An RNA of 177 nucleotides, treated with DMS and 2A3 and read out base by base. The RNA was probed in 150 mM KOAc, 10 mM MgCl2 and 150 mM bicine (pH 8.5) at 24 C. Values cover nucleotides 27 to 126.
RNA sequence: GGGAACGACUCGAGUAGAGUCGAAAAGGUAGCAGAGAAGAGACUAGCCUUCAGACUAGAUAGUAUCACACUACCGGUACAUAGUAGAGACAUACAUAGAUGCGUAUGACACAUCAGAGCUGCCAUGAGGUAUAAUAUGGUUCGCCAUAUUAUACCUAAAAGAAACAACAACAACAAC
Reactivity to DMS in 0.01 (KOAc 150mM, MgCl2 10mM, bicine 150mM(pH8.5), 24C), signal-to-noise 9, nucleotides 027 to 126: g010g010u000a020g030c080a100g010a120g010a110a130g010a150g010a120c030u000a040g010c020c030u010u010c230a140g010a100c030u000a030g000a120u000a090g010u000a070u000c050a090c140a200c040u000a020c040c030g020g000u000a080c100a070u000a050g010u000a050g000a090g010a080c080a040u000a040c070a080u010a080g010a050u000g010c080g010u000a060u000g010a110c080a040c050a050u000c040a070g000a110g010c040u000g010c020c030a090u010g010
Reactivity to 2A3 in 0.01 (KOAc 150mM, MgCl2 10mM, bicine 150mM(pH8.5), 24C), signal-to-noise 9, nucleotides 027 to 126: g020g000u030a010g000c080a020g050a010g020a230a020g080a020g050a070c020u030a020g050c020c010u120u130c070a070g030a140c020u020a010g020a090u070a050g060u030a030u050c020a030c010a020c110u100a050c040c000g000g000u040a030c040a040u100a030g070u040a020g040a010g020a090c010a030u080a020c010a020u110a070g110a100u130g050c030g010u050a030u090g040a030c020a000c000a090u070c020a020g040a010g100c020u020g010c020c010a050u110g120